[RMDB]
RNA sequence: GGGAACGACUCGAGUAGAGUCGAAAAGAUUAAGUGGGAGCGUCGCCCUAUCGGUGCAUCGGAUAUUAAUUAGCCAGUGCGUGGCAGUACGCAUAUUGAUGUCUACUUUGGCGUAGACUUUGCCAAUUUAAGGAUUGCUGGGCAAUCCAGCCCUAGACCAUAAUAUAGUGUUCGCACUAUAUUAUGGAAAAGAAACAACAACAACAAC
Reactivity to 2A3 in 0.01 (KOAc 150mM, MgCl2 10mM, bicine 150mM(pH8.5), 24C), signal-to-noise 7, nucleotides 027 to 156: g050a030u170u170a090a050g050u110g030g030g010a050g020c010g030u030c030g020c010c010c020u070a110u110c060g040g010u030g010c020a030u060c030g040g010a010u030a030u150u140a160a080u120u080a040g030c020c040a030g020u010g040c040g020u030g050g000c040a030g050u070a010c020g010c030a010u030a090u090u140g100a070u090g000u000c010u010a040c030u080u080u140g080g000c050g010u010a050g030a020c000u040u040u050g030c010c010a050a060u040u130u110a090a020g020g000a040u030u090g010c050u080g000g040g000c020a030a050u050c010c000a010g010c000c000c010u030a050g040a040
Reactivity to DMS in 0.01 (KOAc 150mM, MgCl2 10mM, bicine 150mM(pH8.5), 24C), signal-to-noise 3, nucleotides 027 to 156: g020a170u000u000a050a110g010u010g000g020g010a090g010c050g000u000c080g000c020c010c050u000a080u000c080g030g000u000g010c080a040u000c030g000g020a060u000a080u000u000a070a190u010u010a100g000c010c010a080g040u000g010c040g030u000g010g040c050a130g030u000a040c030g030c040a100u000a090u000u000g010a100u000g020u000c020u000a040c010u010u010u000g020g030c120g020u000a040g010a060c040u000u010u000g020c030c030a030a110u000u000u000a120a140g010g010a130u010u000g020c000u000g000g010g000c030a070a110u000c050c040a050g010c020c020c000u010a090g010a250